[RMDB]
RNA sequence: GGGAACGACUCGAGUAGAGUCGAAAAUGAAAACUCGGUAUCCAAGUGCAUCGGAUGUUAUCGAACCAAACCAGGUGGCACCCAUGAGUAACCUCACUUUCUCAAUCGAUACACUUCGAAUCAUAUUCAGCGAACUUGCAUCACCGCCGAUUGCAAACCCCUUGUCACAAUUCGUUGUGACAAGGGGAAAAGAAACAACAACAACAAC
Reactivity to 2A3 in 0.01 (KOAc 150mM, MgCl2 10mM, bicine 150mM(pH8.5), 24C), signal-to-noise 2, nucleotides 027 to 156: u160g010a000a000a020a040c030u020c050g030g030u060a010u080c020c040a090a020g010u030g070c030a040u040c040g060g040a060u050g030u080u060a070u040c040g020a020a030c040c010a120a000a060c050c010a050g000g020u030g010g000c020a050c010c040c020a030u070g010a020g090u060a030a080c000c000u060c020a070c100u030u190u050c060u000c030a090a080u040c040g010a010u010a070c070a020c090u050u040c040g040a050a080u050c110a030u080a140u270u120c020a030g060c000g060a080a060c030u010u060g000c040a020u030c030a010c010c010g030c010c020g040a030u000u120g020c030a070a040a250